[RMDB]
RNA sequence: GGGAACGACUCGAGUAGAGUCGAAAAGCAAGGACGUACGCGUCCUUGCAAGGUCUACUUCGGUAGACCACAUAUGACUACGGUCAUAUGAAGACUAGAGCUACGGCUCUAGUCACCGCGGUCUACGGACCGCGGAACAUGUUCCGUUCGCGGAACAUGAAGGCGGAGGCUACGGCCUCCGCCACGGAUUGGCGUGAGCCAAUCCGAAGCAUACGCGGUGACGCGUAUGCAAGAGGUUCUAGCUACACCCUCUAUAAAAAACUAAUACACCUACAUUCGUGUAGGUGAAAAGAAACAACAACAACAAC
Reactivity to 2A3 in 0.01 (KOAc 150mM, MgCl2 10mM, bicine 150mM(pH8.5), 24C), signal-to-noise 4, nucleotides 027 to 266: g000c000a000a000g000g020a000c000g010u060a020c260g020c010g090u020c000c000u000u000g020c000a010a010g000g000u000c000u010a000c010u030u080c210g060g000u000a000g000a000c000c000a020c000a000u010a010u010g000a000c000u020a030c260g130g000u010c000a000u010a000u020g110a110a070g000a000c000u000a000g000a000g010c010u030a020c300g140g010c000u020c000u000a010g000u010c000a000c000c000g000c010g000g000u040c000u040a080c240g080g010a000c020c000g000c000g010g000a000a020c000a000u000g000u020u010c000c000g000u010u050c250g040c020g100g000a000a000c000a000u000g050a040a070g020g000c020g010g010a010g000g000c020u060a060c300g120g000c010c020u000c000c000g000c000c020a000c010g010g000a000u010u010g000g020c030g030u080g060a020g000c010c000a000a000u000c000c000g000a070a010g000c000a000u000a000c000g000c010g000g040u030g030a020c000g000c000g000u000a000u000g000c000a000a000g010a000g030g010u060u110c080u180a080g090c040u120a080c050a090c060c090c010u000c040u070a130u300a220a030a030a030a010a010c050u190a040a210u300a120